[RMDB]
RNA sequence: GGGAACGACUCGAGUAGAGUCGAAAAGAUCUUAAUGCUCUUGAGUAUUCGCACAGAAUGGGUGUGAUUCAUAGGGAUAUUAAGCCUGGAAAUAUUAUGAUUUCCGAGCAGGGCAUUGAUAAAGUUACAUAUCGUGACUCUUCGGAGUCACGAUAUGAAAAGAAACAACAACAACAAC
Reactivity to DMS in 0.01 (KOAc 150mM, MgCl2 10mM, bicine 150mM(pH8.5), 24C), signal-to-noise 2, nucleotides 027 to 126: g010a070u010c040u000u000a020a010u000g000c010u000c010u000u010g000a100g030u000a040u000u010c000g000c030a090c110a130g020a120a130u020g030g010g070u010g040u000g030a040u010u000c020a100u000a090g010g000g000a080u000a050u000u000a040a070g000c080c010u010g020g020a010a010a020u000a110u000u020a100u010g000a040u000u000u000c000c000g000a070g000c060a100g000g000g030c000a000u000u000g010a080u000a060a090a090g000u020u010a140
Reactivity to 2A3 in 0.01 (KOAc 150mM, MgCl2 10mM, bicine 150mM(pH8.5), 24C), signal-to-noise 1, nucleotides 027 to 126: g040a000u010c010u040u080a010a000u000g000c010u000c020u060u070g010a010g160u090a140u030u080c020g090c020a070c000a010g250a300a210u160g090g190g040u020g010u020g000a000u000u000c020a030u170a000g000g060g040a000u050a030u140u080a020a000g050c000c010u020g050g040a000a040a000u060a050u240u250a180u130g190a010u060u000u000c010c020g020a050g010c040a000g030g000g000c010a030u000u050g050a080u100a060a110a000g030u030u010a070
Chemical mapping of a 177-nucleotide RNA with DMS and 2A3. The RNA was probed in 150 mM KOAc, 10 mM MgCl2 and 150 mM bicine (pH 8.5) at 24 C.